The record gives the reactivity of an RNA of 207 nucleotides to 2A3. Values cover nucleotides 27 to 156. 2A3 adducts were read by reverse transcription with SuperScript II with manganese. It was measured as part of the RMDB library OK3TST. 2A3 is a SHAPE reagent: it acylates the 2'-hydroxyl of flexible nucleotides of all four kinds.
RNA sequence: GGGAACGACUCGAGUAGAGUCGAAAAGACGGCAGUUCGGAACUAUAAGCACAACGAACAGAUCCCAAGUUGUGCUUAUAACUGGACUGAGUACAGUUAGUUGUAUAGCAUACUCUUGGGAUCUGUUGUAUGCUAUAUAGUUCUAACUGUACUGUCACUAUCGCUCGGUAUUCGUACCGAGCGAUAGAAAAGAAACAACAACAACAAC
Reactivity to 2A3 in 0.01 (KOAc 150mM, MgCl2 10mM, bicine 150mM(pH8.5), 24C), signal-to-noise 1, nucleotides 027 to 156: g010a010c010g050g030c010a000g000u060u070c150g020g010a050a010c010u010a000u000a020a010g000c040a000c040a090a070c090g100a000a000c020a060g000a010u000c000c010c000a000a010g030u030u020g000u010g000c000u010u000a000u000a010a010c000u060g050g040a000c020u040g040a030g180u130a160c010a000g000u000u000a010g000u000u090g010u000a050u130a140g000c010a000u030a070c050u040c000u080u020g000g030g010a010u000c000u010g000u020u010g000u000a000u020g000c020u010a020u000a020u010a300g040u000u050c000u000a030a000c000u000g010u040a190c000u000g000u000c000a000